[RMDB]
RNA sequence: GGGAACGACUCGAGUAGAGUCGAAAACUCGAAAGAGACCUGCAUAUCUUAGGCAGAUGACCAAGUCUCGUCUGAAAAGCGAAAGCCCUAAGAUAUGCAGCUGUGAAGACUUGGCGCAGAAAAUAAACGUAAUUACCCGUUUCGACGGGUAAUUACGAAAAGAAACAACAACAACAAC
Reactivity to 2A3 in 0.01 (KOAc 150mM, MgCl2 10mM, bicine 150mM(pH8.5), 24C), signal-to-noise 4, nucleotides 027 to 126: c010u010c010g050a030a030a010g070a000g030a090c000c010u000g000c000a000u000a000u000c000u000u000a000g000g020c010a000g000a050u010g020a020c040c000a000a020g010u000c060u010c110g090u000c020u000g120a170a140a140a030g000c030g060a090a010a010g010c000c000c000u000a000a000g000a000u000a000u000g000c000a010g000c010u000g000u010g050a090a020g000a020c010u000u000g020g000c000g010c010a000g140a030a080a020a020u290a070a080a030
Reactivity to DMS in 0.01 (KOAc 150mM, MgCl2 10mM, bicine 150mM(pH8.5), 24C), signal-to-noise 2, nucleotides 027 to 126: c000u000c030g010a080a170a160g000a050g020a140c250c010u030g010c010a000u000a000u000c000u000u000a000g010g010c010a060g050a000u000g010a140c190c000a000a000g000u000c020u000c020g020u020c000u030g010a080a060a160a080g000c000g000a090a030a110g030c000c000c000u000a000a000g000a000u000a010u000g000c000a000g000c040u010g000u000g000a100a100g000a030c010u000u000g000g000c000g000c080a040g050a250a060a170a040u000a070a070a190